Conditions: 150 mM KOAc, 10 mM MgCl2 and 150 mM bicine (pH 8.5), 24 C. This 207-nucleotide RNA was probed chemically with 2A3.

RNA sequence: GGGAACGACUCGAGUAGAGUCGAAAACUGCCGCCGGGACGCAGUGAUCCUCGCAGGGUCGCACGGUCGCCUCGGGUCGGCCUCGUGUCGGCUCGACCUGCGAGGGGACCGAGUGGCGAGCCCGACCAAAACUUUCUCGCCUUCGGGCGAGAAAGAAGCAAGGUAUCAUGUUCGCAUGAUACCUUGCAAAAGAAACAACAACAACAAC
Reactivity to 2A3 in 0.01 (KOAc 150mM, MgCl2 10mM, bicine 150mM(pH8.5), 24C), signal-to-noise 2, nucleotides 027 to 156: c020u050g030c070c050g120c050c040g050g020g070a090c020g000c050a050g040u050g040a050u010c020c020u040c020g050c100a070g050g060g020u060c030g070c030a060c020g020g040u040c070g150c090c010u040c010g000g010g000u000c000g020g010c000c010u080c060g300u290g140u160c090g010g010c140u150c100g000a030c010c010u050g090c040g010a010g000g010g020g010a000c000c010g010a050g030u060g020g010c010g010a030g050c000c010c010g010a010c010c050a040a050a030a070c000u010u000u000c020u000c000g030c010c000u050u100c160g060g010g000c000g000a000g000a000a000a000g000a010a010